RNA sequence: GGGAACGACUCGAGUAGAGUCGAAAAGCACGGGCUUGACCAAGCGUGCGAACACUUGAGCGGUCUAACCAGAGCUCUUGUGGAUUAGGACGUUCUACGACUAGUAGUCUACGUAGUUCGUCCGAAAGGCUAGCUUGUGGUUCGCCACGAGCUAGCCAAAAGAAACAACAACAACAAC
Reactivity to DMS in 0.01 (KOAc 150mM, MgCl2 10mM, bicine 150mM(pH8.5), 24C), signal-to-noise 4, nucleotides 027 to 126: g000c010a040c060g000g010g000c060u020u000g000a140c130c090a150a080g050c020g050u000g020c010g010a090a110c020a010c000u010u000g000a030g020c020g000g030u000c090u000a120a060c200c130a150g000a160g020c030u000c000u000u000g000u010g000g000a160u020u010a070g010g000a000c010g010u000u010c000u010a000c020g010a150c080u010a090g000u030a080g030u020c070u060a260c030g000u000a010g000u000u000c010g020u000c010c000g010a080a080a140
Reactivity to 2A3 in 0.01 (KOAc 150mM, MgCl2 10mM, bicine 150mM(pH8.5), 24C), signal-to-noise 6, nucleotides 027 to 126: g000c010a010c010g060g080g000c080u120u210g120a160c030c030a030a010g090c010g010u020g010c010g010a110a010c020a000c010u010u040g010a000g010c030g070g160u050c090u090a090a110c060c060a100g010a010g050c010u000c000u010u020g020u020g040g020a050u060u140a090g000g010a010c000g000u000u010c000u000a020c000g060a090c030u020a040g180u030a030g040u160c030u020a050c050g010u010a010g020u010u000c010g000u000c000c000g000a010a000a000